[RMDB]
RNA sequence: GGGAACGACUCGAGUAGAGUCGAAAAGAUAUGGAUCCUUCAUGGUCUUCUAAGACAGUCGGAAACGAUCGAGAAGUCCAUGAGAGGAUCCUAAGUCAAAAGCCGUUACGCUUCGGCGUAACGGCAACAACGGAUACCAGUUCGCUGGUAUCCGUUGAAAAGAAACAACAACAACAAC
Reactivity to DMS in 0.01 (KOAc 150mM, MgCl2 10mM, bicine 150mM(pH8.5), 24C), signal-to-noise 2, nucleotides 027 to 126: g000a080u000a300u000g000g000a010u000c000c000u000u020c010a000u000g000g000u000c020u010u000c000u010a260a080g020a070c300a130g010u000c030g040g000a240a080a110c000g000a020u010c020g000a030g000a020a000g010u000c000c000a000u010g000a050g000a010g050g000a020u000c020c000u000a000a030g000u000c020a070a110a100a100g070c000c000g010u000u000a000c000g060c000u000u010c220g080g040c020g000u040a000a000c000g010g000c000a010a020